[RMDB]
The record gives the reactivity of an RNA of 207 nucleotides to 2A3 and DMS.
For DMS the reverse transcriptase was MarathonRT.
The 2A3 profile rests on 446 reads.
RNA sequence: GGGAACGACUCGAGUAGAGUCGAAAAUUUACAGCCCCAUUUUCCAGUGUCAAGGAUUUGCGUGGAGUUCUGUGGUACCGAUUAGACCCUUAGUUGUUACAAGUGUCGAUAUAGGGUGGAAUCCGCUAGUGUCGAGCUUCAAGGUUGCAGCAGCCUAAUUCUUUAAUCUCUUCGGAGAUUAAAGAAUAAAAGAAACAACAACAACAAC
Reactivity to 2A3 in 0.01 (KOAc 150mM, MgCl2 10mM, bicine 150mM(pH8.5), 24C), signal-to-noise 1, nucleotides 027 to 156: u200u190u120a120c020a050g050c000c000c000c000a060u140u050u030u000c060c040a040g040u020g040u160c070a140a070g060g030a060u050u120u110g030c030g000u030g040g000a040g000u050u050c050u000g030u070g080g010u080a080c000c000g010a030u040u130a060g130a120c000c000c020u000u050a080g000u020u070g050u050u040a020c010a130a080g010u020g070u040c010g000a010u030a000u040a080g020g000g010u020g030g090a050a020u060c050c000g040c050u070a050g050u000g020u040c000g000a030g000c030u060u050c100a010a070g050g000u030u120g000c050a080g080c020a010g030c000c020u020a030
Reactivity to DMS in 0.01 (KOAc 150mM, MgCl2 10mM, bicine 150mM(pH8.5), 24C), signal-to-noise 2, nucleotides 027 to 156: u010u000u000a120c060a160g000c040c010c010c030a130u000u000u030u000c030c040a220g010u000g010u010c090a120a140g000g010a080u000u000u000g030c060g000u020g000g000a150g030u020u000c040u010g050u010g010g010u000a060c050c020g000a120u000u000a130g020a080c020c020c010u000u000a160g010u000u010g020u000u000a100c100a060a090g020u000g030u000c050g000a120u000a100u000a060g030g000g020u010g010g010a140a120u000c040c030g030c050u000a100g030u000g040u000c060g020a150g010c040u000u010c040a060a120g040g030u000u000g000c030a100g030c040a050g000c020c030u010a080